[RMDB]
RNA sequence: GGGAACGACUCGAGUAGAGUCGAAAAGGCUUUUGCGCCGGGAACCGGCACGCCGGUUGCAGGCGGCCCCUCCUCGGCAAAGAUGCUGUCUGUCCUGCGCAAGCUGACGGCUCUUGACUUCGUGGGACCUAAUAUCCGUGUUCGCACGGAUAUUAGGAAAAGAAACAACAACAACAAC
Reactivity to DMS in 0.01 (KOAc 150mM, MgCl2 10mM, bicine 150mM(pH8.5), 24C), signal-to-noise 5, nucleotides 027 to 126: g010g010c020u000u000u000u000g010c240g020c010c030g000g010g010a070a040c040c100g010g000c040a080c270g020c000c000g010g020u010u010g010c100a060g000g010c030g000g000c030c040c040c060u000c030c020u000c040g000g010c080a060a130a060g000a070u010g000c010u000g000u000c020u010g000u000c020c030u010g020c040g000c140a060a070g000c030u000g000a130c050g000g000c030u000c030u000u000g000a130c060u000u000c050g010u000g000g010g010a170
Reactivity to 2A3 in 0.01 (KOAc 150mM, MgCl2 10mM, bicine 150mM(pH8.5), 24C), signal-to-noise 4, nucleotides 027 to 126: g020g010c010u090u090u190u120g020c040g000c030c030g000g000g010a030a030c040c010g020g020c110a070c100g050c020c020g020g010u040u090g060c050a030g000g000c000g000g020c000c010c000c000u000c010c010u060c050g050g010c010a040a060a010g060a050u170g000c000u020g020u030c010u020g110u060c000c010u030g020c030g000c020a030a050g000c020u040g030a020c030g030g030c010u010c010u060u110g070a080c010u060u030c060g010u070g010g020g040a040